[RMDB]
RNA sequence: GGGAACGACUCGAGUAGAGUCGAAAAGGGGGUGACCCGGUUUCGACAGGGGAACUGAAGGUGAUGUUGCGUGUCGAGGUGCCGUUGGCCUCGUAAACAAACGGCAAAGCCAUUUAACUGGCAACCAGAACUACGCUCUCGCUGCUUAAGUGAGAUGGAUGAUUGGUAUCUUCGGAUACCAAUCAUCAAAAGAAACAACAACAACAAC
Reactivity to 2A3 in 0.01 (KOAc 150mM, MgCl2 10mM, bicine 150mM(pH8.5), 24C), signal-to-noise 1, nucleotides 027 to 156: g010g010g000g000g010u010g010a000c020c000c020g010g010u000u120u060c090g040a010c040a080g030g010g000g020a000a070c010u020g060a040a010g060g000u010g020a030u050g060u200u100g000c120g010u080g010u030c000g000a020g000g020u030g020c000c010g000u020u120g000g000c000c000u000c020g050u040a010a010a010c020a000a000a000c000g000g050c090a170a000a020g000c000c000a020u090u200u100a280a060c070u030g000g030c010a000a000c010c000a030g020a140a030c010u030a030c110g000c000u000c000u000c030g020c010u050g020c020u120u110a150a050g000u010g000a000g000a060u050g210